[RMDB]
RNA sequence: GGGAACGACUCGAGUAGAGUCGAAAAGAUAUGGAGGUAGGCCGAUAAGAAGGGAUCGGAAACGAUCCACUUCUUUUGACGGCUGUUCUCCUAAGUCAAAAGUAUUGCAACUUCGGUUGCAAUACAAUCGCUAUGAGUCCUUCGGGACUCAUAGCGAAAAAGAAACAACAACAACAAC
Reactivity to DMS in 0.01 (KOAc 150mM, MgCl2 10mM, bicine 150mM(pH8.5), 24C), signal-to-noise 1, nucleotides 027 to 126: g000a010u010a240u010g010g010a040g020g020u000a220g030g000c030c000g020a090u000a030a030g000a010a030g020g000g000a000u000c000g000g010a090a050a070c000g000a000u000c000c000a040c010u000u000c000u020u000u000u000g020a270c050g000g030c020u000g000u000u010c000u000c000c000u000a070a100g000u020c020a090a150a080a170g000u000a000u000u000g000c000a010a000c000u010u030c170g030g020u000u000g030c000a010a000u010a010c000a070a080